Background: The data come from the RNA Mapping Database (RMDB), library M2RFPK. The record gives the reactivity of an RNA of 207 nucleotides to 2A3.

RNA sequence: GGGAACGACUCGAGUAGAGUCGAAAACACAAUUCUCUAAGCGAUGAGAAGCGUGUGGAAAAUUAGGGAAGGGCUACGGCUAUAAUCCUAAGAAAGCUUAUCUACAAGCGGAGGUAUUCUCAUAACGAAAACCAUUUGGCGUUCGCGCCAAAUGGAACACCAGGAACGUGUUCGCACGUUCCUGGUGAAAAGAAACAACAACAACAAC
Reactivity to 2A3 in 0.01 (KOAc 150mM, MgCl2 10mM, bicine 150mM(pH8.5), 24C), signal-to-noise 1, nucleotides 027 to 156: c020a000c030a000a040u020u010c010u000c010u090a250a300g160c150g160a240u140g000a120g000a000a010g010c080g020u050g020u050g000g070a050a050a030a020u020u010a040g000g000g070a030a100g170g000g000c000u040a000c100g050g020c000u020a050u020a220a070u080c020c020u010a000a010g080a080a040a000g010c000u040u040a070u240c050u130a070c100a100a010g000c050g120g000a040g000g070u050a080u080u000c000u000c040a100u040a090a040c090g030a040a030a050a050c000c000a020u000u000u010g010g010c020g040u050u010c180g020c000g010c050c000a000a000a000u000g000g000a000a000
Overview: The reactions ran in a buffer of 150 mM KOAc, 10 mM MgCl2 and 150 mM bicine (pH 8.5), at 24 C.